Structure probing data (DMS) for a 177-nucleotide construct. The reactions ran in a buffer of 150 mM KOAc, 10 mM MgCl2 and 150 mM bicine (pH 8.5), at 24 C. DMS adducts were read by reverse transcription with MarathonRT. The DMS profile rests on 2,413 reads.
[RMDB]
RNA sequence: GGGAACGACUCGAGUAGAGUCGAAAAGAUAUGGAAUACUACCCACCGCACGACAGUCGAAGAACAAGUAAUUAGUCGGAAACGACUAAUUACUUGGGAGACUGUCGUGCGAGGUAUUCCUAAGUCAUCUAUUGUAUUGCUUCGGCAAUACAAUAGAAAAAGAAACAACAACAACAAC
Reactivity to DMS in 0.01 (KOAc 150mM, MgCl2 10mM, bicine 150mM(pH8.5), 24C), signal-to-noise 3, nucleotides 027 to 126: g000a110u010a160u000g000g010a020a000u000a010c010u000a090c080c020c010a300c260c000g000c000a010c000g010a010c000a000g030u000c000g000a160a180g000a150a190c000a000a010g010u000a010a010u000u000a000g010u010c000g000g000a060a080a150c000g030a010c000u000a000a010u000u000a000c030u000u000g000g040g040a120g000a020c000u000g000u000c000g010u000g000c000g020a000g020g000u000a010u000u000c000c000u010a050a110g020u010c140a140